RNA sequence: GGGAACGACUCGAGUAGAGUCGAAAACAGUGAUGGAAACAUCACUGAAAAACGUGUCAGCGCUACACGAAAAAGUCGAUCGAAUACCGAUCGACAAGCGCUAAAGUCAUGCCGAAAGGCAUGACAACGAGGUAUGGGACUUCGGUCCCAUACCUCGAAAAGAAACAACAACAACAAC
Reactivity to 2A3 in 0.01 (KOAc 150mM, MgCl2 10mM, bicine 150mM(pH8.5), 24C), signal-to-noise 1, nucleotides 027 to 126: c000a000g000u020g000a000u000g000g060a120a000a000c000a000u000c010a000c000u000g000a050a000a000a030a000c000g000u000g000u000c060a020g000c000g030c020u020a000c010a000c000g180a260a000a000a000a000g010u050c000g000a000u000c000g000a010a010u110a300c120c030g000a010u000c000g010a000c010a000a000g000c000g020c000u000a000a000a000g030u030c000a000u020g000c000c000g000a070a060a000g000g000c000a000u000g000a030c000a000a050